[RMDB]
RNA sequence: GGGAACGACUCGAGUAGAGUCGAAAAAGAAGUGCGUCAUCAUUGACGCACCGGGCCUGCUUCGCGAGGUGGGCAUCUCCGAUGCAAUCGUCAACAACUUUUUCCUCGCCGGUGGCGAGAUUGGUCAUGAGCUAUGUAUGUUCGCAUACAUAGCUCAAAAAGAAACAACAACAACAAC
Reactivity to 2A3 in 0.01 (KOAc 150mM, MgCl2 10mM, bicine 150mM(pH8.5), 24C), signal-to-noise 2, nucleotides 027 to 126: a000g140a080a020g000u010g000c010g040u020c010a070u030c050a100u090u230g000a000c010g010c000a000c010c000g000g030g000c020c010u010g000c010u020u040c030g040c060g060a020g030g000u060g010g110g000c030a030u030c050u010c020c010g030a030u040g060c030a050a110u070c050g040u040c030a030a070c000a000a060c110u110u090u010u070u100c010c010u010c010g040c030c030g270g190u180g010g030c000g000a010g000a030u070u080g060g030u100c060a070
Reactivity to DMS in 0.01 (KOAc 150mM, MgCl2 10mM, bicine 150mM(pH8.5), 24C), signal-to-noise 3, nucleotides 027 to 126: a050g010a130a110g000u000g000c000g020u000c000a050u010c270a240u000u000g010a010c010g010c010a000c000c070g020g010g010c020c040u000g010c030u000u000c040g010c200g010a050g010g020u000g010g010g000c080a070u000c030u000c020c050g000a050u000g000c060a080a050u000c110g020u000c070a120a080c190a060a070c050u000u000u010u010u000c080c000u000c030g030c010c020g020g020u000g030g010c000g010a030g000a070u000u010g000g010u010c110a140
The data come from the RNA Mapping Database (RMDB), library OK2TRN. Structure probing data (2A3 and DMS) for a 177-nucleotide construct. The RNA was probed in 150 mM KOAc, 10 mM MgCl2 and 150 mM bicine (pH 8.5) at 24 C. For DMS the reverse transcriptase was MarathonRT. For 2A3 the reverse transcriptase was SuperScript II with manganese. Values cover nucleotides 27 to 126. For DMS, 3,401 sequencing reads were counted.